[RMDB]
RNA sequence: GGGAACGACUCGAGUAGAGUCGAAAAGAUAUGGAAAUGACUUCAACUAGUGAGAGCGAUAAGGUACAUUCGGAAACGAAUGAAUACCUUUUGACGCUCUCACUAGUUGAAGUUCAUUUCCUAAGUCCAGGAGCACAUAGUUCGCUAUGUGCUCCUGAAAAGAAACAACAACAACAAC
Reactivity to DMS in 0.01 (KOAc 150mM, MgCl2 10mM, bicine 150mM(pH8.5), 24C), signal-to-noise 1, nucleotides 027 to 126: g000a040u000a300u000g050g000a000a000a020u000g000a050c000u000u000c000a010a000c000u000a010g000u000g000a020g000a000g000c000g000a160u000a020a040g000g050u000a050c030a060u000u000c000g000g000a140a080a300c000g010a000a030u000g000a180a220u000a000c010c000u000u000u000u000g000a170c060g000c000u000c000u000c000a000c000u000a000g000u010u000g000a000a010g000u000u000c000a000u000u000u000c000c000u000a030a060g010u000c010
Notes:
Chemical mapping of a 177-nucleotide RNA with DMS. For DMS, 1,225 sequencing reads were counted. The reactions ran in a buffer of 150 mM KOAc, 10 mM MgCl2 and 150 mM bicine (pH 8.5), at 24 C. For DMS the reverse transcriptase was MarathonRT.